[RMDB]
RNA sequence: GGGAACGACUCGAGUAGAGUCGAAAAGAUAUGGACCUAGGUGGACAUGAGCGUAGUCGGAAACGACUACAGCUCAACAGCCACGCUAGGUCCUAAGUCAAAAGGGGGGUGACUUCGGUCACCCCCCCCUAGAUCCAUCCUUCGGGAUGGAUCUAGGAAAAGAAACAACAACAACAAC
Reactivity to DMS in 0.01 (KOAc 150mM, MgCl2 10mM, bicine 150mM(pH8.5), 24C), signal-to-noise 1, nucleotides 027 to 126: g020a040u010a030u000g000g000a010c010c000u010a000g000g030u000g030g010a080c140a110u030g010a050g010c000g010u010a000g000u000c000g000g010a010a010a030c010g000a040c010u000a000c010a030g040c020u020c000a030a090c190a220g000c010c000a010c000g010c020u000a020g000g000u000c000c000u000a000a070g000u000c000a060a060a150a180g000g000g030g010g000g020u010g010a000c000u000u020c270g010g030u000c010a000c000c000c000c000c000c000
Source: RMDB library TTRDES, as collected in RNAgym. The record gives the reactivity of an RNA of 177 nucleotides to DMS. Reactivities are rounded to 0.1 and cut off at 0 and 3. Values cover nucleotides 27 to 126. In probing experiments dimethyl sulfate is read out at A N1 and C N3, which are open when not base-paired. The reactions ran in a buffer of 150 mM KOAc, 10 mM MgCl2 and 150 mM bicine (pH 8.5), at 24 C.